[RMDB]
Conditions: 150 mM KOAc, 10 mM MgCl2 and 150 mM bicine (pH 8.5), 24 C. Structure probing data (DMS and 2A3) for a 177-nucleotide construct. For DMS the reverse transcriptase was MarathonRT.
RNA sequence: GGGAACGACUCGAGUAGAGUCGAAAAGGCGAUGUGGUGGAUCAGGUGGUGCGUCCAACCGGAUUGCUUGACCCGAUUAUCGAAGUGCGGCCGGUGGCGACACAGGUUGAUGAUCUUCUUUCGGAGAUAAGUGCAGAAGUUUCGACUUCUGCACUUAAAAAGAAACAACAACAACAAC
Reactivity to DMS in 0.01 (KOAc 150mM, MgCl2 10mM, bicine 150mM(pH8.5), 24C), signal-to-noise 3, nucleotides 027 to 126: g010g010c010g030a030u000g000u000g010g010u010g000g000a040u000c120a110g020g020u000g010g020u010g020c100g000u000c010c020a050a070c030c020g000g000a050u000u000g010c000u000u000g000a200c020c000c010g020a120u020u010a060u010c070g010a070a070g010u000g000c040g000g000c010c000g010g040u000g010g010c220g000a140c040a020c040a020g020g010u000u000g010a090u000g000a050u010c030u000u000c030u010u000u010c100g010g000a120g010a130
Reactivity to 2A3 in 0.01 (KOAc 150mM, MgCl2 10mM, bicine 150mM(pH8.5), 24C), signal-to-noise 2, nucleotides 027 to 126: g040g000c010g010a020u050g050u040g300g020u040g010g030a040u030c000a060g020g060u100g020g110u000g010c070g030u000c010c040a070a090c010c050g040g010a070u050u040g010c010u000u080g000a040c010c040c020g020a150u120u050a160u210c070g030a040a000g020u000g080c000g040g000c020c020g000g010u010g010g020c010g020a020c000a000c020a050g120g000u020u040g030a100u010g020a020u010c000u030u040c010u020u120u040c040g090g000a100g040a080
The data come from the RNA Mapping Database (RMDB), library OK2TST.